[RMDB]
RNA sequence: GGGAACGACUCGAGUAGAGUCGAAAAGUGGAGAAUCAUAAAUAUAGAAGGAUAGGUCUCAACUCAUCAUCUUGUUACAAGGCAUUAAAUCUAUCACCUCUGAUUCAAAGGUAUUUGCCGUCGGGAGCCUCUCUCUAAAUUUCGAUUUAGAGAGAGGAAAAGAAACAACAACAACAAC
Reactivity to DMS in 0.01 (KOAc 150mM, MgCl2 10mM, bicine 150mM(pH8.5), 24C), signal-to-noise 3, nucleotides 027 to 126: g060u010g000g000a140g010a080a010u030c030a090u010a060a070a110u050a120u050a060g010a080a140g000g000a040u020a000g000g010u010c050u010c110a010a080c020u040c030a020u040c050a030u000c010u000u020g010u010u010a020c090a020a040g000g010c030a020u020u010a010a040a060u000c090u010a010u010c090a040c050c020u000c030u020g000a090u010u040c040a040a080a030g000g010u000a090u010u020u000g010c010c000g020u000c100g000g020g020a080g010
Reactivity to 2A3 in 0.01 (KOAc 150mM, MgCl2 10mM, bicine 150mM(pH8.5), 24C), signal-to-noise 6, nucleotides 027 to 126: g080u070g020g060a060g070a120a080u060c060a040u090a170a220a040u290a010u090a070g070a040a040g090g000a010u040a030g030g020u060c030u020c070a020a040c020u000c010a050u040c000a070u040c060u080u100g030u060u040a070c060a100a070g030g000c010a020u080u110a050a090a100u070c050u070a070u080c040a060c060c000u000c030u070g080a170u100u040c050a110a050a010g050g000u040a090u060u060u080g010c010c020g020u050c020g060g010g000a010g030

About this RNA: Chemical mapping of a 177-nucleotide RNA with DMS and 2A3. DMS (dimethyl sulfate) methylates the pairing face of unpaired adenines and cytosines. The RNA was probed in 150 mM KOAc, 10 mM MgCl2 and 150 mM bicine (pH 8.5) at 24 C. Values cover nucleotides 27 to 126.